[RMDB]
RNA sequence: GGGAACGACUCGAGUAGAGUCGAAAAACCUGUCCCUCACCCUGAUUAGGUCAGCAGACAUAGCUCUGGUUGCUGGGGGCAGCCGGAAACGCUGGAUCAUCGCCACAGAAAACAUGCAGGCUGGAGAGCCUUUGCACAUAUUCGUAUGUGCAAAGGCAAAAGAAACAACAACAACAAC
Reactivity to DMS in 0.01 (KOAc 150mM, MgCl2 10mM, bicine 150mM(pH8.5), 24C), signal-to-noise 2, nucleotides 027 to 126: a050c020c020u000g000u010c020c010c030u000c070a040c090c020c050u000g000a070u020u010a090g040g020u000c030a080g020c060a030g010a080c090a080u010a140g010c090u010c010u000g010g010u000u000g000c060u010g000g010g010g000g010c040a000g030c020c010g010g000a100a060a070c180g020c030u000g000g010a090u000c060a040u010c070g000c000c040a040c100a050g010a050a090a050a100c140a050u010g030c050a030g010g010c040u000g010g020a110g000a160
Reactivity to 2A3 in 0.01 (KOAc 150mM, MgCl2 10mM, bicine 150mM(pH8.5), 24C), signal-to-noise 1, nucleotides 027 to 126: a000c010c020u040g060u040c010c000c000u000c010a040c010c000c010u050g070a170u120u190a060g000g020u050c030a030g050c010a000g070a080c070a120u210a080g030c030u000c000u020g020g020u050u030g000c040u050g040g050g000g000g030c010a010g050c030c010g050g000a060a070a020c040g030c060u050g010g060a030u000c010a000u030c050g040c050c010a030c020a050g090a020a140a020a040c020a010u100g040c020a020g010g000c000u030g040g000a110g040a060
The record gives the reactivity of an RNA of 177 nucleotides to DMS and 2A3. Conditions: 150 mM KOAc, 10 mM MgCl2 and 150 mM bicine (pH 8.5), 24 C. DMS adducts were read by reverse transcription with MarathonRT. Values cover nucleotides 27 to 126. For 2A3 the reverse transcriptase was SuperScript II with manganese. The data come from the RNA Mapping Database (RMDB), library OK2TRN.